[RMDB]
RNA sequence: GGGAACGACUCGAGUAGAGUCGAAAACCUGUUAUCUGACCAAUAACAGAAUGCACCACAGCGUAAAAUCAUCUGAUUGGGUGAGUUGGUCGCACCGCCAUUUGACGAACGAACGCCAAGCCUAGGCACUACGAGUAUGUGUUCGCACAUACUCGAAUCACAAAUGGUGGUUCGCCACCAUUUGUGAAAAAGAAACAACAACAACAAC
Reactivity to 2A3 in 0.01 (KOAc 150mM, MgCl2 10mM, bicine 150mM(pH8.5), 24C), signal-to-noise 3, nucleotides 027 to 156: c010c000u010g000u000u000a000u000c000u010g030a030c010c000a020a010u020a010a010c010a010g060a120a100u170g020c050a060c050c000a040c050a050g070c060g060u080a030a140a020a110u050c040a050u000c040u060g060a100u100u160g100g030g000u000g010a020g000u010u030g010g000u010c010g000c030a000c000c000g040c020c010a070u090u040u150g030a050c010g020a190a040c040g020a080a010c040g040c010c010a090a020g040c050c030u090a060g040g000c030a020c110u120a040c020g000a000g000u010a000u000g020u000g020u030u030c180g000c060a000c000a000u000a000c000u000c000g020a010a010
Reactivity to DMS in 0.01 (KOAc 150mM, MgCl2 10mM, bicine 150mM(pH8.5), 24C), signal-to-noise 1, nucleotides 027 to 156: c030c020u010g030u010u010a040u080c010u000g010a050c030c020a300a050u000a030a000c010a090g000a110a050u000g040c070a110c030c000a050c040a020g000c040g010u000a090a050a170a090u000c050a020u000c040u010g000a090u010u000g020g010g000u000g000a300g010u000u030g030g000u000c110g000c010a040c020c060g050c060c010a160u000u000u000g000a060c000g000a180a080c120g000a130a100c010g010c000c040a000a170g050c070c080u000a050g010g000c030a060c090u000a090c000g010a040g000u000a000u000g030u000g030u000u000c300g060c020a060c020a010u000a010c020u000c000g010a010a050